Structure probing data (2A3) for a 177-nucleotide construct.
The RNA was probed in 150 mM KOAc, 10 mM MgCl2 and 150 mM bicine (pH 8.5) at 24 C.
2A3 adducts were read by reverse transcription with SuperScript II with manganese.
2A3 is a SHAPE reagent: it acylates the 2'-hydroxyl of flexible nucleotides of all four kinds.
Source: RMDB library RFM100, as collected in RNAgym.

RNA sequence: GGGAACGACUCGAGUAGAGUCGAAAAAGCGACCUCGAGUACGCUCGAGGUCGCAACCGUCAACAAUAUCCUGGUGCUGAGUGAGUGGCACUCGGAGACUCCAGCAUCAGUGAUUUUGUUGAAGAAACGAAUGCCCUUCAUUCGUGAAGGGCAUUCGAAAAGAAACAACAACAACAAC
Reactivity to 2A3 in 0.01 (KOAc 150mM, MgCl2 10mM, bicine 150mM(pH8.5), 24C), signal-to-noise 2, nucleotides 027 to 126: a000g000c000g000a000c000c000u010c020g000a030g000u030a030c200g060c090u000c010g060a000g010g030u000c000g020c000a000a000c010c000g010u010c000a000a000c000a000a000u010a010u010c000c000u000g000g000u000g000c000u030g000a110g120u120g020a020g030u010g160g040c100a090c150u070c140g080g010a120g050a040c000u010c020c010a000g000c000a000u000c000a020g000u010g060a000u000u020u000u010g010u000u010g010a000a020g060a030a070a000